[RMDB]
RNA sequence: GGGAACGACUCGAGUAGAGUCGAAAAGGGGUCUCCACCGAUAAGGACUAAGUCCUAUGAAGUAUGGCUGAAGCCUCCACGGCCAUAUGGAGGACGAAGUCCUUUUGACGGUGGAGACGGAGGCACCCAAAGAUGCAUUACUUCGGUAAUGCAUCAACAUUUGUUAGUCGUUCGCGACUAACAAAUGAAAAGAAACAACAACAACAAC
Reactivity to DMS in 0.01 (KOAc 150mM, MgCl2 10mM, bicine 150mM(pH8.5), 24C), signal-to-noise 1, nucleotides 027 to 156: g020g020g060g020u000c020u010c020c020a030c030c010g070a150u010a040a020g030g000a060c000u040a100a300g030u000c000c000u000a140u030g000a220a300g010u020a010u000g000g000c000u030g010a070a130g000c010c010u000c010c030a300c090g000g000c060c010a010u000a010u000g000g000a000g030g040a040c020g010a140a050g000u000c010c000u000u000u000u000g020a250c030g030g000u000g000g010a000g020a010c010g000g010a020g040g050c040a040c050c000c030a040a130a110g010a030u000g000c020a000u000u000a030c000u010u010c300g060g020u010a000a000u000g000c020a010u000c000a090a120
Reactivity to 2A3 in 0.01 (KOAc 150mM, MgCl2 10mM, bicine 150mM(pH8.5), 24C), signal-to-noise 3, nucleotides 027 to 156: g060g010g030g010u000c000u000c000c000a000c000c000g090a130u140a300a040g000g000a000c010u060a060a050g010u010c010c000u260a300u080g000a000a000g000u000a000u000g000g000c010u010g030a190a010g030c000c000u000c000c000a010c010g010g000c000c010a000u000a000u010g010g000a030g000g000a000c010g000a000a000g000u000c000c010u010u010u020u050g010a010c000g000g000u000g000g000a000g000a000c000g000g000a000g000g000c010a080c000c000c000a050a120a020g000a000u000g010c000a000u000u010a000c020u030u120c270g100g000u000a000a000u000g000c000a000u000c000a000a000